Structure probing data (2A3 and DMS) for a 170-nucleotide construct. Values cover nucleotides 27 to 129. Values are in units of 0.01, from 0 to 300, in steps of 10. For 2A3 the reverse transcriptase was SuperScript II with manganese. Conditions: 150 mM KOAc, 10 mM MgCl2 and 150 mM bicine (pH 8.5), 24 C. DMS (dimethyl sulfate) methylates the pairing face of unpaired adenines and cytosines. It was measured as part of the RMDB library 15KLIB.
RNA sequence: GGGAACGACUCGAGUAGAGUCGAAAAAUUGGGACGAAGCCGCCACCGGGCGCUCCCCUCGGAGGUCCCUCGAGGGGGUUCACAUCCCCAACCCGCGGGCCGGCUACUCUUCUUUCCCUUCUCUCGUCUAGCGUGUCGUUCGCGACACGCAAAAGAAACAACAACAACAAC
Reactivity to 2A3 in 0.01 (KOAc 150mM, MgCl2 10mM, bicine 150mM(pH8.5), 24C), signal-to-noise 2, nucleotides 027 to 129: a000u140u110g020g000g000a000c070g040a040a000g050c030c050g010c020c010a120c010c040g000g000g000c040g040c060u090c010c000c010c010u030c010g060g000a000g000g080u100c070c000c000u000c000g000a030g000g030g010g000g000u100u100c030a050c050a140u150c010c000c000c000a040a030c000c000c000g000c130g060g000g000c140c070g020g000c000u060a110c000u000c000u200u020c030u060u090u040c000c000c000u090u030c030u010c020u000c010g130u000c040u030a030
Reactivity to DMS in 0.01 (KOAc 150mM, MgCl2 10mM, bicine 150mM(pH8.5), 24C), signal-to-noise 2, nucleotides 027 to 129: a000u000u020g030g010g010a070c130g060a070a110g030c000c000g000c090c000a000c010c000g020g130g010c120g000c160u010c010c000c010c000u010c000g040g020a050g000g020u050c020c000c040u070c000g080a060g000g000g000g000g000u040u030c090a150c100a100u060c000c000c000c000a050a100c000c000c070g020c280g000g000g020c150c000g060g020c000u020a100c290u050c020u000u050c020u020u000u020c000c000c030u100u010c040u010c050u020c100g020u040c080u030a110